[RMDB]
This 177-nucleotide RNA was probed chemically with 2A3 and DMS.
Values cover nucleotides 27 to 126.
The DMS profile rests on 1,513 reads.
The reactions ran in a buffer of 150 mM KOAc, 10 mM MgCl2 and 150 mM bicine (pH 8.5), at 24 C.
For 2A3, 2,300 sequencing reads were counted.
RNA sequence: GGGAACGACUCGAGUAGAGUCGAAAAUCCUCACGUUUCGACGUGAGGAGAACUGUAGCAAGGGAAGGGAACCCUCGGGAAGGGCUCCCAAGGCGAUCUCAACAAGGGCCAAAUUCGUUUGGCCCAAUCAUCCUACCAACUUCGGUUGGUAGGAUGAAAAAGAAACAACAACAACAAC
Reactivity to 2A3 in 0.01 (KOAc 150mM, MgCl2 10mM, bicine 150mM(pH8.5), 24C), signal-to-noise 2, nucleotides 027 to 126: u000c000c000u010c000a000c000g020u030u070u150c250g140a030c010g000u010g000a020g020g020a030g010a030a020c060u090g020u200a010g010c060a070a070g130g040g100a060a050g050g060g000a050a050c000c020c010u020c030g050g040g060a030a010g000g030g050c020u010c010c000c000a010a010g010g000c000g030a130u000c040u010c040a010a250c040a080a160g000g000g000c000c010a000a000a040u090u080c210g070u030u000u000g030g000c000c000c000a000a000
Reactivity to DMS in 0.01 (KOAc 150mM, MgCl2 10mM, bicine 150mM(pH8.5), 24C), signal-to-noise 2, nucleotides 027 to 126: u000c000c010u030c000a000c000g030u000u000u010c170g000a020c000g030u010g000a020g000g010a000g000a060a060c030u000g030u000a130g010c110a100a100g010g000g010a190a150g000g000g000a050a020c030c000c000u010c070g010g020g030a230a090g050g010g010c030u010c000c000c000a010a040g010g010c040g020a070u010c050u000c070a090a080c240a090a080g010g010g050c010c000a000a010a050u010u010c210g010u000u000u000g020g000c010c000c000a010a020